[RMDB]
RNA sequence: GGGAACGACUCGAGUAGAGUCGAAAAAGAUCGAUUACGAUCGAUCAAUCAUGCCCCUCACCCACCUCUGAAGAUCCCAGGUGGGCGAGGGAACGGAGCACGGGAUCACGAGCAGUACGCUGCUCGAAAAAGAACUAGACCUUCGGGUCUAGUUCAAGCAAUAUAUUCAGUUCGCUGAAUAUAUUGCAAAAGAAACAACAACAACAAC
Reactivity to DMS in 0.01 (KOAc 150mM, MgCl2 10mM, bicine 150mM(pH8.5), 24C), signal-to-noise 1, nucleotides 027 to 156: a080g010a010u000c000g010a030u000u000a140c270g030a120u000c020g000a020u000c000a100a160u010c040a080u010g020c010c010c010c020u020c020a040c010c050c010a010c010c020u000c010u010g020a210a100g000a120u010c000c020c000a100g020g060u020g010g010g010c000g010a020g030g000g010a010a010c080g020g000a190g040c170a110c070g020g010g030a040u000c030a210c030g000a000g000c020a040g000u010a150c300g070c010u010g020c000u000c000g030a010a020a100a120a070g010a080a030c000u010a010g000a040c000c040u010u000c300g100g020g020u000c010u010a000g000u000u000c000a030a120
Reactivity to 2A3 in 0.01 (KOAc 150mM, MgCl2 10mM, bicine 150mM(pH8.5), 24C), signal-to-noise 5, nucleotides 027 to 156: a000g000a000u000c000g000a000u060u100a080c220g040a020u000c000g000a000u010c000a000a140u150c040a030u240g090c010c000c020c000u000c000a020c000c000c000a010c000c010u040c080u100g080a070a030g000a040u010c010c000c000a000g000g010u000g010g000g000c000g000a000g000g000g010a020a050c100g090g090a090g070c140a070c160g000g010g000a000u000c010a000c020g000a000g000c000a000g010u060a030c250g020c130u000g000c000u000c000g000a000a010a000a010a000g000a000a000c000u000a000g000a000c010c020u020u100c230g070g010g000u000c000u000a000g000u000u000c000a000a000